[RMDB]
RNA sequence: GGGAACGACUCGAGUAGAGUCGAAAAGAGAGAAAUACCGCGCGCAAGCAGAGAAAGGACUGUAAGGACGCGAAAUCCUUUCCGUCAUUUACCGCAAGAAAGAGCGAUGUGUGACGAAUAGAGAGAGAUAUGCAGUGCUGUUCGCAGCACUGCAUAUAAAAGAAACAACAACAACAAC
Reactivity to 2A3 in 0.01 (KOAc 150mM, MgCl2 10mM, bicine 150mM(pH8.5), 24C), signal-to-noise 2, nucleotides 027 to 126: g070a000g070a000g030a010a090a080u070a070c010c000g000c000g000c020g000c060a250a030g060c000a020g010a030g000a090a090a000g000g020a030c000u000g010u050a020a060g080g010a000c050g000c000g160a070a010a010u000c000c000u000u020u000c020c000g000u000c000a000u060u000u090a160c050c000g030c020a040a050g050a110a210a000g040a020g080c020g040a070u070g040u010g020u030g090a030c000g020a020a000u090a030g150a000g010a000g000a000g000
Reactivity to DMS in 0.01 (KOAc 150mM, MgCl2 10mM, bicine 150mM(pH8.5), 24C), signal-to-noise 1, nucleotides 027 to 126: g000a030g010a070g010a080a160a020u000a120c010c080g020c100g010c050g040c220a150a120g010c030a080g000a100g050a020a040a120g000g000a000c020u000g020u060a140a110g000g020a110c000g080c000g010a020a060a100u000c000c010u030u010u010c060c000g000u000c000a020u000u000u000a050c100c000g060c010a130a070g000a060a090a140g040a110g000c010g000a020u000g000u000g000u010g000a000c000g000a060a050u030a030g000a120g000a050g000a100g000
This 177-nucleotide RNA was probed chemically with 2A3 and DMS. It was measured as part of the RMDB library OK1LIB. Reactivities are given for positions 27 through 126. For 2A3, 1,006 sequencing reads were counted.